The record gives the reactivity of an RNA of 177 nucleotides to DMS. The reactions ran in a buffer of 150 mM KOAc, 10 mM MgCl2 and 150 mM bicine (pH 8.5), at 24 C. In probing experiments dimethyl sulfate is read out at A N1 and C N3, which are open when not base-paired. The data come from the RNA Mapping Database (RMDB), library TTRINS.
RNA sequence: GGGAACGACUCGAGUAGAGUCGAAAAGAUAUGGAGGGAAUUGCUGGAGCUCGGCGGUGCUAAGACAGUUGAUCGGAAACGAUCAAUCGAGCACUACCGAGCGAUGAAAGCAAUUCCCUCCUAAGUCCAUCAGAUUACGGUUCGCCGUAAUCUGAUGAAAAGAAACAACAACAACAAC
Reactivity to DMS in 0.01 (KOAc 150mM, MgCl2 10mM, bicine 150mM(pH8.5), 24C), signal-to-noise 2, nucleotides 027 to 126: g000a110u000a200u000g000g000a010g020g010g000a050a000u000u000g020c010u010g030g010a070g050c000u000c000g010g010c030g050g040u000g000c010u000a230a140g010a130c300a090g020u000u000g010a020u000c000g020g000a100a060a230c010g000a000u000c000a000a020u000c080g000a010g020c000a020c010u000a050c010c010g010a010g010c000g000a000u010g000a110a200a040g000c010a000a010u000u000c030c000c020u010c000c000u000a000a040g000u000c070